This 177-nucleotide RNA was probed chemically with 2A3 and DMS. The data come from the RNA Mapping Database (RMDB), library OK2TRN. Conditions: 150 mM KOAc, 10 mM MgCl2 and 150 mM bicine (pH 8.5), 24 C. For DMS, 1,128 sequencing reads were counted.

RNA sequence: GGGAACGACUCGAGUAGAGUCGAAAAGAUGCGGAUUCGGUGCUGCGGAGAAAGGAUACAUCGCGCCGAUGCGUCCAGGCGGAUGACGUCCGAUGCGUGCAGCUGGUCCAGGAUCCGCGGCGCGGACGCAUGCUGUCGUCUUCGGACGACAGCAUGCAAAAGAAACAACAACAACAAC
Reactivity to 2A3 in 0.01 (KOAc 150mM, MgCl2 10mM, bicine 150mM(pH8.5), 24C), signal-to-noise 1, nucleotides 027 to 126: g100a020u100g000c000g020g030a040u040u060c030g070g080u090g000c020u030g020c000g000g060a130g050a070a070a020g020g000a000u040a080c000a000u040c040g010c010g030c260c020g020a020u040g020c010g020u020c000c040a070g140g080c090g000g010a010u040g080a170c070g020u000c010c030g020a060u140g040c060g070u110g000c010a020g050c020u060g090g020u030c030c000a020g020g020a030u040c000c000g000c000g000g000c050g000c030g000g000a010c020
Reactivity to DMS in 0.01 (KOAc 150mM, MgCl2 10mM, bicine 150mM(pH8.5), 24C), signal-to-noise 1, nucleotides 027 to 126: g020a150u020g000c040g020g000a040u010u000c010g010g020u000g020c020u010g010c060g020g030a060g000a070a180a120g010g020a000u000a080c020a030u010c020g000c040g010c010c020g000a050u010g000c030g010u010c030c070a190g000g000c060g000g000a010u000g000a150c170g040u000c000c050g010a140u010g030c070g000u030g000c060a050g000c140u000g000g000u000c030c020a130g030g000a100u000c010c000g000c000g000g010c070g020c060g000g000a040c090